RNA sequence: GGGAACGACUCGAGUAGAGUCGAAAAACACAGCACGUCAUCAGAGUACUGGAUCGCAUUGUGGUCAACCGUGGCUACCCGGUGAUGGGUUUUGAGGUCCAAUGGGACGAAAACGUACGUUAAGGAGAUUCGAUUGAUUAUUCGUAAUCAAUCGAAUAAAAGAAACAACAACAACAAC
Reactivity to 2A3 in 0.01 (KOAc 150mM, MgCl2 10mM, bicine 150mM(pH8.5), 24C), signal-to-noise 6, nucleotides 027 to 126: a000c060a000c010a020g070c030a010c050g050u030c020a090u040c020a050g050a020g130u060a060c030u070g040g030a050u040c010g020c090a070u050u140g050u080g060g030u020c020a050a050c090c050g080u050g030g000c030u040a060c010c010c000g030g030u130g040a120u130g010g030g000u040u010u030u110g040a030g020g020u000c010c000a050a130u160g050g010g020a000c030g050a070a050a040a010c040g050u100a000c030g020u030u090a120a040g120g030a150g060
Reactivity to DMS in 0.01 (KOAc 150mM, MgCl2 10mM, bicine 150mM(pH8.5), 24C), signal-to-noise 9, nucleotides 027 to 126: a090c070a090c080a080g010c050a060c060g010u000c070a090u000c050a080g010a240g010u000a060c060u000g000g000a060u000c040g010c050a060u010u010g020u000g010g010u000c030a080a070c100c100g010u010g010g000c060u010a080c020c020c010g000g020u010g010a080u010g010g010g010u000u000u010u000g020a100g010g010u000c010c010a070a090u010g010g010g010a110c040g000a050a040a060a070c090g010u000a040c070g010u000u010a080a120g000g010a140g010